[RMDB]
RNA sequence: GGGAACGACUCGAGUAGAGUCGAAAAGAUAUGGAGGAUGAGAACACGCUAGAGAGGUCGGAAACGACUACCCACCUCUAGACCCGUGACAUCCUCCUAAGUCAAAACCUGUCCUUCGGGACAGGAACAGUUAGUUAAGCUUCGGCUUAACUAACUGAAAAGAAACAACAACAACAAC
Reactivity to 2A3 in 0.01 (KOAc 150mM, MgCl2 10mM, bicine 150mM(pH8.5), 24C), signal-to-noise 3, nucleotides 027 to 126: g030a010u080a050u140g000g000a010g000g020a020u000g040a070g080a300a060c010a000c020g020c010u020a000g000a010g000a010g010g010u010c010g030g000a090a080a070c000g030a020c020u050a050c020c060c010a080c010c000u000c010u000a020g040a130c090c030c050g000u010g030a050c000a010u000c010c000u010c010c000u000a020a000g010u010c030a010a030a100a180c000c010u000g000u020c000c000u030u090c300g080g000g000a000c000a000g010g010a020a010
Reactivity to DMS in 0.01 (KOAc 150mM, MgCl2 10mM, bicine 150mM(pH8.5), 24C), signal-to-noise 3, nucleotides 027 to 126: g000a030u010a300u000g000g010a010g000g010a020u000g010a160g040a170a110c020a030c030g010c010u010a000g010a010g000a080g000g000u000c000g000g000a090a110a180c000g000a010c000u000a070c050c020c070a300c060c000u000c000u000a000g000a040c080c140c040g000u010g000a220c020a000u000c000c010u000c000c010u000a000a120g000u000c040a110a050a100a160c000c000u000g000u000c000c000u000u040c200g020g000g000a000c000a000g010g000a020a080
About this RNA: The record gives the reactivity of an RNA of 177 nucleotides to 2A3 and DMS. For DMS the reverse transcriptase was MarathonRT. Values cover nucleotides 27 to 126. For DMS, 2,085 sequencing reads were counted. The RNA was probed in 150 mM KOAc, 10 mM MgCl2 and 150 mM bicine (pH 8.5) at 24 C. For 2A3, 5,896 sequencing reads were counted.